[RMDB]
RNA sequence: GGGAACGACUCGAGUAGAGUCGAAAAGGCCCAUGUCGGCUAUAUCCCGGGCCGGGAUGGCCGGGUGACCGGGCUGUCCAAGAUCGCCCGGCUGGUGGACCUCUACGCCAAGCGUCCUCAGGUGCAGACGUCAUCGAUAUUUCGAUAUCGAUGACGUAAAAGAAACAACAACAACAAC
Reactivity to 2A3 in 0.01 (KOAc 150mM, MgCl2 10mM, bicine 150mM(pH8.5), 24C), signal-to-noise 4, nucleotides 027 to 126: g060g000c020c030c010a020u130g280u050c010g030g010c030u040a040u020a080u300c000c000c020g000g060g000c080c040g010g030g000a060u070g010g000c010c010g010g010g020u100g030a070c040c030g000g080g010c040u060g000u000c030c000a050a040g050a110u050c010g020c000c000c000g000g000c030u050g000g030u090g030g010a080c000c020u010c080u100a050c070g010c020c000a070a030g020c020g040u000c000c010u000c040a050g000g020u070g040c030a010g030
Reactivity to DMS in 0.01 (KOAc 150mM, MgCl2 10mM, bicine 150mM(pH8.5), 24C), signal-to-noise 2, nucleotides 027 to 126: g000g020c020c000c020a050u020g030u020c050g000g000c010u000a040u020a040u010c030c000c050g010g010g010c060c040g050g000g010a030u000g000g010c000c000g010g010g010u040g000a220c020c050g000g000g010c030u000g020u000c020c070a230a120g010a050u000c160g020c000c000c020g000g000c050u010g010g030u010g000g000a070c000c010u010c080u030a110c140g000c030c010a050a060g030c130g010u000c000c000u000c060a060g010g020u030g010c110a140g010

Chemical mapping of a 177-nucleotide RNA with 2A3 and DMS. The RNA was probed in 150 mM KOAc, 10 mM MgCl2 and 150 mM bicine (pH 8.5) at 24 C. 2A3 adducts were read by reverse transcription with SuperScript II with manganese. DMS adducts were read by reverse transcription with MarathonRT. The data come from the RNA Mapping Database (RMDB), library OK1LIB.